[RMDB]
RNA sequence: GGGAACGACUCGAGUAGAGUCGAAAAACGGUGCUCAAUGAUUCGUCAUUGAGCACCGUAAAAGGGCCACGGAAACCGCGCGCGGUGAUCAAUGAGCCGCGUUCGCUCCCGUGGCCCACAAAAAAGUAACUACCUUGUGUUCGCACAAGGUAGUUACGGAUACUAGGCAGUUCGCUGCCUAGUAUCCAAAAGAAACAACAACAACAAC
Reactivity to 2A3 in 0.01 (KOAc 150mM, MgCl2 10mM, bicine 150mM(pH8.5), 24C), signal-to-noise 1, nucleotides 027 to 156: a000c000g020g010u000g000c000u000c000a010a000u020g000a070u030u170c200g040u000c030a020u040u000g000a000g010c000a000c000c000g000u000a000a000a000a030g020g000g000c010c000a000c010g010g010a090a030a010c060c000g000c000g000c000g000c000g010g000u030g030a080u220c160a160a160u180g010a070g030c060c000g020c010g000u010u030c040g010c050u040c020c040c010g000u000g000g000c000c000c000a000c000a000a000a000a000a000a000g010u000a000a000c000u000a000c000c000u000u000g000u000g010u030u080c150g030c090a000c000a000a010g030g000u000a000g000u000u000a000c000
Conditions: 150 mM KOAc, 10 mM MgCl2 and 150 mM bicine (pH 8.5), 24 C.
This 207-nucleotide RNA was probed chemically with 2A3.
It was measured as part of the RMDB library PDB130.
For 2A3 the reverse transcriptase was SuperScript II with manganese.